[RMDB]
RNA sequence: GGGAACGACUCGAGUAGAGUCGAAAACCGAACAGGUGUUCGCACCUGUUCGGAAAAAACCUUUGUGUCUUUGCCAACAGCCUACGCCUCCCAUUGGGAGGGUAGGACAUGGCAGGACACUCUGGUAAAAACGGUAUUCAGUUCGCUGAAUACCGAACCCUACAGAGUCUUUCGAGACUCUGUAGGGAAAAGAAACAACAACAACAAC
Reactivity to 2A3 in 0.01 (KOAc 150mM, MgCl2 10mM, bicine 150mM(pH8.5), 24C), signal-to-noise 2, nucleotides 027 to 156: c000c000g000a000a000c000a080g000g030u050g040u160u260c300g010c110a000c000c000u000g010u000u040c000g010g000a020a000a000a020a040a040c010c000u020u000u010g000u000g000u000c010u160u300u130g010c000c000a040a060c020a190g040c040c000u030a060c100g300c090c000u010c050c020c030a300u170u260g000g000g000a010g000g000g000u000a000g000g020a010c000a000u020g010g000c000a000g010g000a000c000a000c000u000c000u000g020g000u130a070a070a080a000a000c000g000g000u000a000u000u000c000a000g040u040u090c190g070c180u000g000a000a000u010a000c000c000g000a010a010